[RMDB]
RNA sequence: GGGAACGACUCGAGUAGAGUCGAAAAGAAAACUGCACACUAAUAGAUGCUCUAUUGGGAGACCCUCAGUGUGAUGGCUUCCAAAAUAAGAAAUGGGACCUUUUUGUUGAACGCAGCAAAGCCUACAUAGGCAGAGCAAAUUCGUUUGCUCUGCCUAAAAAGAAACAACAACAACAAC
Reactivity to 2A3 in 0.01 (KOAc 150mM, MgCl2 10mM, bicine 150mM(pH8.5), 24C), signal-to-noise 2, nucleotides 027 to 126: g050a020a070a000a010c000u020g000c000a010c010a000c010u110a000a080u040a060g040a010u220g000c000u000c030u050a040u060u020g050g020g020a030g080a160c020c000c000u020c020a220g090u220g080u140g210a070u050g000g000c010u000u010c000c000a000a000a000a050u270a090a010g180a070a140a130u160g000g000g070a090c000c010u000u000u000u000u070g070u020u070g020a140a040c110g000c000a000g030c020a090a020a070g030c000c010u020a040c020a260
Reactivity to DMS in 0.01 (KOAc 150mM, MgCl2 10mM, bicine 150mM(pH8.5), 24C), signal-to-noise 1, nucleotides 027 to 126: g000a080a080a270a120c070u000g010c030a010c040a150c010u000a070a020u010a000g010a070u020g000c020u000c020u000a040u040u000g000g070g000a000g000a160c000c000c100u000c010a100g000u060g000u030g010a040u000g000g000c000u000u080c000c010a020a000a110a110u040a170a210g000a030a040a110u000g010g000g000a060c030c010u070u000u000u000u000g000u020u060g020a060a160c160g000c000a000g060c050a000a130a090g010c060c000u000a080c080a210
About this RNA:
Source: RMDB library OK1LIB, as collected in RNAgym. The record gives the reactivity of an RNA of 177 nucleotides to 2A3 and DMS. For DMS, 1,233 sequencing reads were counted. The reactions ran in a buffer of 150 mM KOAc, 10 mM MgCl2 and 150 mM bicine (pH 8.5), at 24 C.